[RMDB]
Conditions: 150 mM KOAc, 10 mM MgCl2 and 150 mM bicine (pH 8.5), 24 C. Chemical mapping of a 207-nucleotide RNA with 2A3. For 2A3 the reverse transcriptase was SuperScript II with manganese.
RNA sequence: GGGAACGACUCGAGUAGAGUCGAAAAGGGGUCAAGGAGCUCCCGUAACAGCAUCGAUCUAUACCUGAAGCCUCCACGGGUAUAGGGAGCUGGAUAAGGGAGCGCGAAACUUGACGGAGGCACCCAAAACUCAAUCGAGGUUCGCCUCGAUUGAGAAGGUUAAUACAACCUUCGGGUUGUAUUAACCAAAAGAAACAACAACAACAAC
Reactivity to 2A3 in 0.01 (KOAc 150mM, MgCl2 10mM, bicine 150mM(pH8.5), 24C), signal-to-noise 2, nucleotides 027 to 156: g000g010g030g020u010c000a010a000g060g010a060g110c000u010c000c000c020g000u020a040a040c000a000g000c000a010u300c050g000a000u000c000u000a000u000a000c000c000u010g050a210a040g000c010c000u000c000c000a000c000g010g010g000u000a000u010a010g010g000g000a010g010c000u000g000g020a010u030a030a010g000g000g010a000g010c000g000c010g150a130a100a090c010u020u010g010a010c000g010g000a000g000g000c000a010c000c000c010a040a150a100a110c010u010c000a010a010u000c000g000a010g030g040u090u120c240g140c020c000u000c000g000a010u000u000g000a000g000a020a040